The record gives the reactivity of an RNA of 177 nucleotides to 2A3 and DMS.
RNA sequence: GGGAACGACUCGAGUAGAGUCGAAAAUCAGGCAACUUCGGUUGCCUGAAAAUAAACUCGCCUAUAGCCAGGCGAGUACCAAAGCGGGUAAAGCAAUGGAAAAAACUGCCUCGUUCGCGAGGCAGAACAAUAGGCCAAUCUUCGGAUUGGCCUAUUGAAAAGAAACAACAACAACAAC
Reactivity to 2A3 in 0.01 (KOAc 150mM, MgCl2 10mM, bicine 150mM(pH8.5), 24C), signal-to-noise 2, nucleotides 027 to 126: u030c000a000g000g000c000a000a000c020u070u110c230g100g010u000u000g010c010c010u000g000a000a000a000a010u100a000a080a000c000u000c000g010c000c010u120a140u150a130g110c070c000a020g000g000c000g020a000g010u010a000c000c000a030a010a000g050c050g010g150g210u300a130a060a010g000c010a030a070u060g000g000a070a090a000a010a000a080c010u000g010c000c000u000c000g030u030u030c270g000c000g090a010g000g000c020a010g000a000a000
Reactivity to DMS in 0.01 (KOAc 150mM, MgCl2 10mM, bicine 150mM(pH8.5), 24C), signal-to-noise 2, nucleotides 027 to 126: u000c020a000g000g010c010a000a020c000u010u020c180g020g010u000u000g010c010c000u000g000a000a030a040a090u020a060a170a000c000u000c000g030c010c010u000a120u010a120g010c290c230a050g020g000c020g000a000g000u020a040c010c000a030a020a300g010c010g020g030g010u000a050a070a180g020c020a080a190u000g000g020a000a030a050a050a070a110c010u000g000c000c000u000c000g020u020u020c170g030c000g000a010g010g030c000a010g000a040a070
The reactions ran in a buffer of 150 mM KOAc, 10 mM MgCl2 and 150 mM bicine (pH 8.5), at 24 C.
For 2A3 the reverse transcriptase was SuperScript II with manganese.